[RMDB]
RNA sequence: GGGAACGACUCGAGUAGAGUCGAAAAUGUCACACAGUAGCGAGGGAUGCAAUUAAUUGCAUCUACACCAAGCUCAUGGCUUGGAUUUCGACUAGUGUCGAGUCGUUCCCACUCGCUACGCCCACAACUCCUUUAGGUAUUUCGAUACCUAAAGGAGAAAAGAAACAACAACAACAAC
Reactivity to DMS in 0.01 (KOAc 150mM, MgCl2 10mM, bicine 150mM(pH8.5), 24C), signal-to-noise 6, nucleotides 027 to 126: u020g010u010c190a120c190a190c120a080g020u000a000g010c000g010a030g010g010g000a020u000g000c010a020a050u000u010a100a070u020u000g000c000a000u000c000u010a080c140a210c020c010a000a000g000c000u000c220a160u000g010g000c000u000u000g000g020a220u000u000u000c000g010a020c010u000a040g000u010g000u000c000g000a000g000u000c010g000u010u000c000c000c010a000c000u000c000g000c010u000a010c020g020c030c020c020a080c130a090a160
Reactivity to 2A3 in 0.01 (KOAc 150mM, MgCl2 10mM, bicine 150mM(pH8.5), 24C), signal-to-noise 2, nucleotides 027 to 126: u080g030u020c050a050c000a010c010a160g010u020a000g000c020g000a000g000g010g020a000u010g000c010a000a030u210u200a150a230u090u090g000c000a000u020c020u020a010c010a030c000c020a020a010g010c020u060c130a160u180g090g000c030u000u000g000g020a080u010u000u020c010g000a000c000u070a040g120u040g130u300c010g000a000g000u030c000g000u000u000c010c000c000a010c010u000c010g040c010u010a000c020g000c030c030c030a100c000a000a130